[RMDB]
Structure probing data (2A3 and DMS) for a 177-nucleotide construct. The reactions ran in a buffer of 150 mM KOAc, 10 mM MgCl2 and 150 mM bicine (pH 8.5), at 24 C. It was measured as part of the RMDB library OK2TST. Reactivities are given for positions 27 through 126.
RNA sequence: GGGAACGACUCGAGUAGAGUCGAAAACUCAAGAAAAUGCGCGAAUUGUAUCGAUAAGUUGGCGCUACCAAUUAAUGUCAGCAGCACCAGAUGGUUUACAAGUUAAAUUAUGUACGCCAAGCCGCUGCUUGGCUAUCGAGUUCGCUCGAUAGCCAAGAAAAGAAACAACAACAACAAC
Reactivity to 2A3 in 0.01 (KOAc 150mM, MgCl2 10mM, bicine 150mM(pH8.5), 24C), signal-to-noise 2, nucleotides 027 to 126: c010u010c040a030a040g150a050a080a040a060u140g000c020g010c030g060a030a030u070u050g090u160a140u220c150g070a090u070a200a040g040u020u040g100g000c020g000c030u030a050c010c040a030a020u150u170a160a090u180g090u140c030a010g000c010a000g000c000a020c040c000a060g050a170u030g010g020u000u040u000a010c000a000a050g050u110u120a200a130a080u220u090a080u090g000u000a000c030g010c010c000a030a020g000c010c020g030c000u040g000
Reactivity to DMS in 0.01 (KOAc 150mM, MgCl2 10mM, bicine 150mM(pH8.5), 24C), signal-to-noise 6, nucleotides 027 to 126: c040u010c030a150a130g020a070a060a110a080u010g030c020g020c000g010a050a050u000u000g010u010a300u010c090g000a110u010a050a060g010u000u010g010g010c030g010c040u000a130c140c120a070a090u010u000a080a050u010g000u000c080a050g010c010a020g010c010a060c110c120a100g000a140u000g010g000u000u000u000a020c020a020a110g010u000u010a050a070a120u000u010a050u010g000u010a010c080g010c010c010a020a110g000c070c100g030c030u000g010
2A3 adducts were read by reverse transcription with SuperScript II with manganese. The 2A3 profile rests on 3,355 reads.